[RMDB]
RNA sequence: GGGAACGACUCGAGUAGAGUCGAAAAUCAAAGAGCGUCGCACACACGCAGUCUAAGUCUGCUGCAUGCAGAGCCUAAACCGCAGGCUCUGUGUGCGAGAUAUCGUUCAAAAUGCAUGCAGAAAAAACUAUACCCUUUGCUUCGGCAAAGGGUAUAGAAAAGAAACAACAACAACAAC
Reactivity to 2A3 in 0.01 (KOAc 150mM, MgCl2 10mM, bicine 150mM(pH8.5), 24C), signal-to-noise 1, nucleotides 027 to 126: u120c050a090a100a050g050a010g000c030g080u010c010g000c030a010c000a000c000a000c020g010c010a000g050u000c030u120a090a050g060u000c000u020g000c010u010g000c020a000u020g000c000a000g000a000g030c000c000u100a150a110a070c080c050g130c130a010g000g000c000u000c020u010g000u010g010u010g000c000g000a000g010a000u240a030u150c020g010u080u050c040a070a080a020a020u060g030c000a010u020g000c000a020g000a030a050a000a000a000a000
Reactivity to DMS in 0.01 (KOAc 150mM, MgCl2 10mM, bicine 150mM(pH8.5), 24C), signal-to-noise 2, nucleotides 027 to 126: u000c090a120a170a060g010a050g000c040g000u000c000g010c040a030c020a010c020a090c160g000c010a030g010u000c090u010a070a250g010u010c020u010g000c000u010g000c000a030u010g000c010a030g000a020g000c010c010u000a070a050a170c110c140g030c240a020g000g000c000u000c000u000g000u000g010u000g000c010g000a000g000a090u020a030u010c040g020u010u000c030a030a060a030a050u000g010c000a000u000g000c020a040g000a000a040a040a080a030a100
Structure probing data (2A3 and DMS) for a 177-nucleotide construct.
The reactions ran in a buffer of 150 mM KOAc, 10 mM MgCl2 and 150 mM bicine (pH 8.5), at 24 C.
It was measured as part of the RMDB library M2PK90.